Structure probing data (DMS and 2A3) for a 207-nucleotide construct. It was measured as part of the RMDB library ARCHII. Reactivities are given for positions 27 through 156. For 2A3 the reverse transcriptase was SuperScript II with manganese.
RNA sequence: GGGAACGACUCGAGUAGAGUCGAAAAUGGGAUUCGACAGGCGCAGACCCGCGCUGGUUGCGAUUCGUAGGUUACGUCUACGUUAAAACGUUAAACAGUUUAAAUUAACUGCAAACGAAAACUCAUACGCUGUAGCUGCUUAGUUCAGCCCAGCUGCCUAUUACACGUCGUUCGCGACGUGUAAUAGAAAAGAAACAACAACAACAAC
Reactivity to DMS in 0.01 (KOAc 150mM, MgCl2 10mM, bicine 150mM(pH8.5), 24C), signal-to-noise 2, nucleotides 027 to 156: u010g010g010g020a270u000u000c050g030a180c050a120g030g040c040g050c030a140g000a160c090c070c050g000c030g000c010u000g010g000u020u040g020c070g010a150u000u000c010g020u000a010g010g030u010u000a090c150g020u000c000u000a040c050g000u060u010a060a050a070a120c020g010u000u040a100a100a110c000a030g010u030u000u000a080a070a180u000u000a010a050c010u000g010c010a240a090a060c030g000a080a060a060a140c090u000c050a100u010a090c070g010c000u000g020u000a030g000c010u020g000c060u000u000a070g030u010u000c030a070g000c000c030c000a070g040c010u000g000c140
Reactivity to 2A3 in 0.01 (KOAc 150mM, MgCl2 10mM, bicine 150mM(pH8.5), 24C), signal-to-noise 6, nucleotides 027 to 156: u090g020g010g040a040u070u040c020g020a020c050a060g030g000c000g000c010a020g060a240c010c020c020g000c010g000c010u020g080g040u110u110g010c010g020a040u040u050c000g000u000a000g010g040u070u090a020c020g010u000c020u010a000c000g010u000u000a020a030a000a010c000g000u000u010a080a140a020c020a020g020u040u050u110a220a300a220u120u120a040a010c010u050g040c080a050a050a040c020g090a050a020a050a090c050u080c050a030u100a110c110g000c000u010g010u030a040g000c000u000g000c030u150u180a050g030u240u130c000a010g000c000c030c010a000g000c000u010g020c010